[RMDB]
RNA sequence: GGGAACGACUCGAGUAGAGUCGAAAAGAGGGGCCCGACUGCCAAGUUUGGAGAGCACCUCGGGCCGAAGGGUUGAGUAGCACUCAAAGGGAGGAAUCCACUCGGAGUAGAACAGAGAAAUCACCUCAAAUCGUUCAGUUCGCUGAACGAAAAAGAAACAACAACAACAAC
Reactivity to DMS in 0.01 (KOAc 150mM, MgCl2 10mM, bicine 150mM(pH8.5), 24C), signal-to-noise 9, nucleotides 027 to 129: g010a080g030g020g020g000c010c010c020g040a000c300u010g000c060c050a100a140g000u040u050u070g040g040a080g000a110g010c050a060c090c170u010c040g020g000g030c040c020g000a040a030g020g010g030u010u030g030a050g000u000a110g020c070a300c020u000c010a050a050a050g050g010g020a080g010g030a070a080u000c050c060a080c050u000c040g000g000a050g000u000a060g020a050a060c090a060g030a080g020a050a030a040u030c100a080c090c000u050c060a060a090a090
Reactivity to 2A3 in 0.01 (KOAc 150mM, MgCl2 10mM, bicine 150mM(pH8.5), 24C), signal-to-noise 9, nucleotides 027 to 129: g070a020g030g050g020g000c000c000c000g010a020c030u040g030c020c020a100a090g070u060u140u180g160g020a110g020a000g040c020a050c020c040u020c000g010g010g000c000c000g010a030a030g010g000g000u030u020g020a020g010u070a020g020c040a050c110u020c000a060a030a020g030g020g010a100g020g010a040a020u020c010c000a030c020u000c020g020g010a050g020u140a020g010a070a020c060a010g050a000g030a070a060a020u090c040a080c040c010u050c040a030a050a060